[RMDB]
RNA sequence: GGGAACGACUCGAGUAGAGUCGAAAAAAGUGUCGUGGGUGCAACUGAGAGCGCUAUGAUUUGUUUUGCAUAUGGUAUCAAACCAGUGGUUGAUGAUGUUGACAUAGGGUCAAUUGCAAGAGUGACAAUUACCUCGGUUGUUCGCAACCGAGGUAAUAAAAGAAACAACAACAACAAC
Reactivity to DMS in 0.01 (KOAc 150mM, MgCl2 10mM, bicine 150mM(pH8.5), 24C), signal-to-noise 1, nucleotides 027 to 126: a100a090g030u010g000u000c030g030u000g000g020g020u000g020c040a060a070c160u000g030a120g000a090g040c040g000c060u000a050u000g010a070u010u020u000g010u000u000u020u020g010c070a050u010a090u010g020g020u020a100u020c140a110a100a050c050c030a060g000u000g000g000u000u010g030a050u000g020a070u000g030u000u020g010a100c060a100u000a060g020g030g000u000c030a010a050u000u000g010c080a090a040g010a110g030u000g010a050c060a060

Chemical mapping of a 177-nucleotide RNA with DMS. Source: RMDB library OK2TRN, as collected in RNAgym. Conditions: 150 mM KOAc, 10 mM MgCl2 and 150 mM bicine (pH 8.5), 24 C.